[RMDB]
RNA sequence: GGGAACGACUCGAGUAGAGUCGAAAAUCUCAGGUCUUCGGACCUGAGAAAAAUAAAAUAAGCUAAUCGUCAAAGCACUAGACUGUAGAUAAAGACGACAAAAAAGGACAAUCUUCGGAUUGUCCAACUCAGUAAUCGUGUUCGCACGAUUACUGAGAAAAGAAACAACAACAACAAC
Reactivity to DMS in 0.01 (KOAc 150mM, MgCl2 10mM, bicine 150mM(pH8.5), 24C), signal-to-noise 1, nucleotides 027 to 126: u000c000u000c000a000g000g000u000c000u000u010c240g030g010a000c000c010u040g000a040g010a000a020a080a040a040u000a070a060a000a110u020a090a130g000c030u020a150a090u000c040g010u010c010a060a140a090g000c000a170c000u020a050g030a100c080u020g000u000a010g000a060u000a040a120a130g010a000c000g030a050c300a060a020a060a080a100a110g000g000a010c000a000a020u000c000u000u000c250g000g000a000u000u000g010u000c000c000a030a030
Reactivity to 2A3 in 0.01 (KOAc 150mM, MgCl2 10mM, bicine 150mM(pH8.5), 24C), signal-to-noise 1, nucleotides 027 to 126: u000c010u000c000a040g010g010u000c040u020u090c200g140g000a010c010c000u010g000a000g010a000a000a000a020a000u030a000a010a000a050u160a140a000g030c050u030a060a060u020c000g010u010c020a140a220a020g000c010a050c030u090a040g260a300c020u130g170u140a010g020a090u050a020a060a020g050a020c060g050a000c050a060a050a000a000a020a010g010g000a000c010a000a030u000c000u030u110c190g050g000a030u000u040g000u040c000c000a000a000
This 177-nucleotide RNA was probed chemically with DMS and 2A3. For DMS, 677 sequencing reads were counted. It was measured as part of the RMDB library M2PK50. Conditions: 150 mM KOAc, 10 mM MgCl2 and 150 mM bicine (pH 8.5), 24 C.